The record gives the reactivity of an RNA of 177 nucleotides to DMS and 2A3. The reactions ran in a buffer of 150 mM KOAc, 10 mM MgCl2 and 150 mM bicine (pH 8.5), at 24 C. Reactivities are given for positions 27 through 126. For DMS the reverse transcriptase was MarathonRT. For 2A3 the reverse transcriptase was SuperScript II with manganese.
RNA sequence: GGGAACGACUCGAGUAGAGUCGAAAAUGUUCGUAGCGAUGAUGCUUUUCAUCUGACGCGACGUGAAGACCAAACGCAGUUAAGAACCGUAGAUGACACGAAUUUAAAAAGCGCAGGCCCCGAGGGACGUGGGAAUCAUGUUCGCAUGAUUCCCACGAAAAGAAACAACAACAACAAC
Reactivity to DMS in 0.01 (KOAc 150mM, MgCl2 10mM, bicine 150mM(pH8.5), 24C), signal-to-noise 2, nucleotides 027 to 126: u030g010u020u000c010g000u000a070g010c220g070a050u000g050a010u000g000c300u030u000u020u010c050a020u000c000u040g030a130c070g000c010g000a010c080g030u000g000a190a160g000a110c070c030a040a130a160c040g000c050a090g030u020u000a050a140g000a110a030c050c020g040u000a070g000a030u040g030a170c040a020c060g020a040a150u070u020u000a020a120a070a050a070g000c050g010c060a000g000g000c040c030c010c030g010a100g020g000g000a110
Reactivity to 2A3 in 0.01 (KOAc 150mM, MgCl2 10mM, bicine 150mM(pH8.5), 24C), signal-to-noise 3, nucleotides 027 to 126: u110g040u090u080c030g030u060a010g020c020g010a020u040g020a020u070g120c130u190u150u060u010c040a030u000c040u100g100a020c050g010c000g000a020c020g030u040g040a040a050g040a080c000c000a000a000a060c070g010c010a050g020u070u120a180a000g040a060a030c020c000g000u040a030g010a110u140g010a010c050a000c100g020a040a010u070u110u070a140a160a040a030a000g040c020g000c000a000g020g040c000c000c000c000g000a050g010g070g030a030